[RMDB]
RNA sequence: GGGAACGACUCGAGUAGAGUCGAAAACGUCGUGAACUAGCGACAAUGCCGUAGAUCUAUCGUUAUCUAACCGAAACAUCGUGACUAGUCGUAGAAUAGAACCAGGAGCGGACGCUGGCAAACAAAGACGUAAUCUCAGAUUCGUCUGAGGUUACGUAAAAGAAACAACAACAACAAC
Reactivity to 2A3 in 0.01 (KOAc 150mM, MgCl2 10mM, bicine 150mM(pH8.5), 24C), signal-to-noise 9, nucleotides 027 to 126: c050g000u010c010g010u030g080a140a080c060u030a070g020c000g020a010c010a020a050u110g030c020c010g040u050a020g010a100u010c020u040a090u070c060g050u080u040a060u040c050u040a040a080c040c020g040a050a040a030c040a060u070c030g050u030g040a050c030u030a020g040u040c020g040u040a030g040a140a070u100a060g040a050a020c020c020a030g010g040a040g040c030g010g010a010c020g000c030u010g000g010c000a020a060a030c030a010a110a000g100
Reactivity to DMS in 0.01 (KOAc 150mM, MgCl2 10mM, bicine 150mM(pH8.5), 24C), signal-to-noise 9, nucleotides 027 to 126: c140g010u010c040g020u010g000a130a120c120u020a110g010c030g010a050c040a090a090u030g000c030c010g010u010a070g000a070u010c050u010a080u010c060g010u010u010a060u020c060u010a060a100c090c040g010a080a090a090c200a050u010c040g010u010g010a070c040u010a080g010u010c040g020u010a040g000a060a080u020a050g000a060a090c040c030a060g000g010a090g010c040g000g000a040c060g010c020u000g000g000c060a050a070a060c120a050a080a080g000